Chemical mapping of a 177-nucleotide RNA with 2A3 and DMS.
It was measured as part of the RMDB library VIROID.
The 2A3 profile rests on 8,559 reads.
RNA sequence: GGGAACGACUCGAGUAGAGUCGAAAAGGACCCCACUCCUGCGAGACGGGAGUAAUCCUAAACAGGGUUUUCACCCUUCCUUUAGUUUCCUUCCUCUCCUGGAGAGGUCUUCUGCCCUAGCCCGGUCCCGUUAUAAUACGUUCGCGUAUUAUAACGGAAAAGAAACAACAACAACAAC
Reactivity to 2A3 in 0.01 (KOAc 150mM, MgCl2 10mM, bicine 150mM(pH8.5), 24C), signal-to-noise 4, nucleotides 027 to 126: g020g000a000c000c000c030c020a110c020u000c000c010u020g020c150g040a010g010a020c130g000g010g010a000g000u000a000a030u060c020c010u040a060a030a040c300a200g030g020g000u090u070u250u300c120a050c000c000c000u010u030c010c000u010u010u010a000g010u010u020u010c010c000u010u000c000c000u020c000u000c000c010u000g000g000a000g010a010g000g000u010c000u060u010c020u060g020c000c000c010u040a060g050c020c020c030g060g080u080c020
Reactivity to DMS in 0.01 (KOAc 150mM, MgCl2 10mM, bicine 150mM(pH8.5), 24C), signal-to-noise 4, nucleotides 027 to 126: g010g020a020c000c010c030c290a090c010u010c000c000u000g010c190g010a040g000a040c200g040g010g010a010g000u000a040a020u010c300c020u010a010a000a020c200a000g000g000g010u000u010u010u010c200a090c000c000c000u000u000c040c020u000u000u000a010g000u000u000u000c150c000u000u000c010c000u000c010u010c010c020u000g000g000a020g010a070g010g000u000c010u000u000c030u000g010c000c010c020u000a110g010c020c010c030g000g000u010c100